[RMDB]
RNA sequence: GGGAACGACUCGAGUAGAGUCGAAAACUUUGGUGAGGCCCUAUCUAGUAUAGCAAUCCACCAAGCAGGUGAUUUCACACAAUUCAGGUUCUCAUAGAAAAUGCGCCCUGACUUGACAGGUAUGGUCGAUAUGCUGGAUAUUCGUAUCCAGCAUAUCAAAAGAAACAACAACAACAAC
Reactivity to DMS in 0.01 (KOAc 150mM, MgCl2 10mM, bicine 150mM(pH8.5), 24C), signal-to-noise 6, nucleotides 027 to 126: c070u000u010u010g000g010u000g010a070g000g010c280c290c010u000a030u010c030u040a100g050u030a050u000a030g000c060a060a230u000c050c020a040c010c020a020a020g000c150a080g010g000u010g000a110u010u020u020c050a070c090a090c120a060a110u010u010c030a040g000g020u020u020c020u010c010a060u020a140g000a090a060a090a070u010g000c090g000c300c010c000u000g000a040c050u010u000g000a090c060a070g000g010u000a040u010g010g010u000c090
Reactivity to 2A3 in 0.01 (KOAc 150mM, MgCl2 10mM, bicine 150mM(pH8.5), 24C), signal-to-noise 8, nucleotides 027 to 126: c020u070u020u070g060g010u100g040a070g030g000c020c030c000u000a010u000c030u020a050g120u140a070u050a060g010c020a020a060u040c050c010a030c010c000a030a020g110c080a050g040g060u050g050a100u020u110u130c050a060c000a010c010a060a060u040u030c000a020g040g010u140u030c040u010c030a040u080a080g220a060a120a020a020u090g040c020g020c020c000c000u010g020a040c020u050u050g040a030c020a030g050g020u090a090u120g030g020u040c010